[RMDB]
RNA sequence: GGGAACGACUCGAGUAGAGUCGAAAAGUUAGGCUUCGGCCUAACAAAAAGCGUACUACGGACGAGGUACCGGGAGUACCGUUUCCCAAAUAGGAAACAGUACGAAGAACGGUACUACCCACCGUCCGUAUCGCAAAAAAUGUCCUUCGGGACAUAAUAGACUUGAUUGAUUCGUCAAUCAAGUCUAAAAAGAAACAACAACAACAAC
Reactivity to DMS in 0.01 (KOAc 150mM, MgCl2 10mM, bicine 150mM(pH8.5), 24C), signal-to-noise 2, nucleotides 027 to 156: g040u000u000a000g010g020c010u000u010c300g040g000c000c000u000a000a000c000a030a030a080a120a110g000c030g020u000a060c110u000a040c010g010g000a030c010g010a130g050g020u000a020c000c020g010g000g050a300g010u000a000c000c000g010u000u010u000c000c000c000a090a220a250u000a020g010g010a020a000a010c010a020g020u000a030c000g000a170a160g000a200a200c010g010g020u000a000c000u000a030c000c000c030a300c130c000g010u010c010c020g020u000a020u000c000g000c020a000a010a080a040a110a060u000g000u000c000c000u000u010c300g050g000g010a010c010a010u010a020a180
Reactivity to 2A3 in 0.01 (KOAc 150mM, MgCl2 10mM, bicine 150mM(pH8.5), 24C), signal-to-noise 3, nucleotides 027 to 156: g000u000u000a000g000g000c010u030u080c300g070g000c000c010u010a010a010c000a010a020a010a010a020g030c050g040u090a070c040u000a000c020g000g000a000c000g000a020g040g000u020a030c010c000g030g000g010a020g010u020a000c010c010g000u000u010u020c050c010c030a180a300a040u230a060g000g010a000a010a010c010a010g000u040a020c020g080a260a090g040a070a000c000g010g000u010a010c000u030a040c040c030c000a030c010c030g000u000c000c010g000u000a000u030c020g000c000a000a030a070a030a000a060u030g000u010c020c000u010u040c240g090g010g000a000c000a010u060a060a050